This 177-nucleotide RNA was probed chemically with 2A3 and DMS.
[RMDB]
RNA sequence: GGGAACGACUCGAGUAGAGUCGAAAAUGGCACUGCGCAUCCUGGCGGCUCGGCUGCCGGAUUCCGGCGUCUACGUGUGCCACGCCCGCAACGCGCACGGCCACGCGCAGGCGGGGGCGCUGCUCCACGUCGGUUAAAGGUUCGCCUUUAACCGACGAAAAGAAACAACAACAACAAC
Reactivity to 2A3 in 0.01 (KOAc 150mM, MgCl2 10mM, bicine 150mM(pH8.5), 24C), signal-to-noise 1, nucleotides 027 to 126: u030g010g010c030a000c040u050g000c070g000c050a030u010c010c020u050g000g010c020g010g000c040u110c180g280g000c020u020g020c010c000g030g010a030u170u070c090c020g040g020c000g060u020c030u130a090c080g090u070g040u020g080c000c000a010c000g020c000c010c010g040c060a050a100c110g010c010g000c000a030c200g140g010c080c000a050c030g010c030g030c020a030g100g000c010g010g010g000g000g000c020g020c030u050g000c020u010c040c000a070
Reactivity to DMS in 0.01 (KOAc 150mM, MgCl2 10mM, bicine 150mM(pH8.5), 24C), signal-to-noise 2, nucleotides 027 to 126: u020g020g010c020a050c050u020g030c150g050c080a080u000c020c030u030g040g010c000g010g000c010u030c220g030g000c010u000g000c020c000g000g010a060u000u020c040c040g000g020c050g010u020c040u000a120c120g000u000g000u000g000c030c030a080c070g010c000c000c020g000c070a100a140c070g000c050g000c040a110c090g020g000c090c030a070c040g000c010g000c050a090g000g000c020g030g020g010g010g000c030g010c100u010g020c040u000c000c050a130

The reactions ran in a buffer of 150 mM KOAc, 10 mM MgCl2 and 150 mM bicine (pH 8.5), at 24 C. Values cover nucleotides 27 to 126. DMS adducts were read by reverse transcription with MarathonRT.